[RMDB]
RNA sequence: GGGAACGACUCGAGUAGAGUCGAAAAGUGACGUCACUCGUUAUACAUUAACCCAUUACGUCACUCGUUAUACAUUAACUAGUGACGUCAUGAGUAAAUCAUUAACCUUCAUGCAUAUGCAUGAGGACUUAUCUCAACCGUUCGCGGUUGAGAUAAGAAAAGAAACAACAACAACAAC
Reactivity to 2A3 in 0.01 (KOAc 150mM, MgCl2 10mM, bicine 150mM(pH8.5), 24C), signal-to-noise 6, nucleotides 027 to 126: g030u030g010a030c050g050u060c040a020c070u030c020g020u020u030a070u020a100c080a110u040u140a050a040c000c000c020a020u040u100a040c050g030u030c020a010c040u020c020g000u010u020a080u030a120c160a190u160u000a000a000c000u000a020g000u000g000a000c010g010u000c000a000u020g010a000g100u100a030a100a080u130c090a130u100u200a060a100c000c000u080u120c020a010u020g000c030a080u140a100u300g000c000a000u000g000a000g000g010a000
Reactivity to DMS in 0.01 (KOAc 150mM, MgCl2 10mM, bicine 150mM(pH8.5), 24C), signal-to-noise 4, nucleotides 027 to 126: g010u000g000a060c040g020u000c040a060c080u000c070g010u000u000a030u010a150c140a120u000u000a030a040c000c040c020a060u020u010a050c100g010u000c070a020c050u000c080g000u000u010a000u000a130c260a140u010u000a000a010c000u000a020g020u000g010a010c010g010u000c060a000u000g000a050g010u000a050a060a070u000c120a120u000u010a060a120c110c010u000u000c000a000u000g010c010a200u000a110u000g010c000a000u000g010a000g000g000a200